About this RNA: This 177-nucleotide RNA was probed chemically with DMS. The data come from the RNA Mapping Database (RMDB), library OK2TRN.

RNA sequence: GGGAACGACUCGAGUAGAGUCGAAAAACUCUGGAGGCUGAGGUAGGAGGAUUGCUUGGGCCUGGGAGGUUGAUUGAGGCUGCAGUGAGCCAUAAUCACAUCACUGCACUCUAGCCUGGGCAACAGAACUUGAACUGUCCUUCGGGACAGUUCAAGUAAAAGAAACAACAACAACAAC
Reactivity to DMS in 0.01 (KOAc 150mM, MgCl2 10mM, bicine 150mM(pH8.5), 24C), signal-to-noise 1, nucleotides 027 to 126: a080c070u000c030u030g040g020a120g000g000c060u000g000a040g050g000u000a160g000g010a040g020g010a090u000u000g010c050u000u030g010g000g000c040c030u000g010g010g010a020g000g000u000u000g000a080u020u000g020a030g010g000c090u000g000c000a020g010u000g000a060g030c060c090a120u000a090a100u000c130a050c220a130u000c030a060c030u000g000c040a110c050u000c070u030a100g010c010c010u000g010g000g030c030a100a060c100a090g000a070
The reactions ran in a buffer of 150 mM KOAc, 10 mM MgCl2 and 150 mM bicine (pH 8.5), at 24 C.